Overview:
Chemical mapping of a 177-nucleotide RNA with 2A3 and DMS. High 2A3 reactivity points to a flexible backbone, as in loops and unpaired stretches.

RNA sequence: GGGAACGACUCGAGUAGAGUCGAAAAGAUAUGGAGGCCUCGAUAAGCAUCAUUCGGAAACGAAUGAAUGCUUUUGACGAGGACUCCUAAGUCAAAAGCGCUACUUUUGUUCGCAAAAGUAGCGCAACAAUGUACCCCUGUUCGCAGGGGUACAUUGAAAAGAAACAACAACAACAAC
Reactivity to 2A3 in 0.01 (KOAc 150mM, MgCl2 10mM, bicine 150mM(pH8.5), 24C), signal-to-noise 2, nucleotides 027 to 126: g000a030u040a020u090g000g000a000g020g040c030c000u020c010g030a050u040a300a050g000c000a000u010c000a000u020u000c000g010g020a040a010a020c020g020a010a000u020g000a070a000u010g010c010u000u030u040u030g010a000c020g000a000g000g000a000c000u000c000c000u000a010a000g030u000c030a000a020a140a150g000c000g000c000u000a000c010u040u020u000u020g050u050u140c270g020c190a010a010a000a010g010u010a010g010c000g000c000a000a010
Reactivity to DMS in 0.01 (KOAc 150mM, MgCl2 10mM, bicine 150mM(pH8.5), 24C), signal-to-noise 3, nucleotides 027 to 126: g000a020u010a100u020g000g000a010g010g000c010c000u000c000g020a070u020a010a010g030c000a010u000c000a010u000u000c000g010g000a040a040a060c000g010a000a010u010g000a020a010u000g010c000u000u000u000u000g000a250c030g000a020g000g000a010c000u010c000c000u000a000a050g000u000c010a080a080a130a140g000c000g010c010u000a010c000u000u000u010u000g000u000u010c200g020c020a010a010a010a010g010u000a000g010c000g030c000a010a020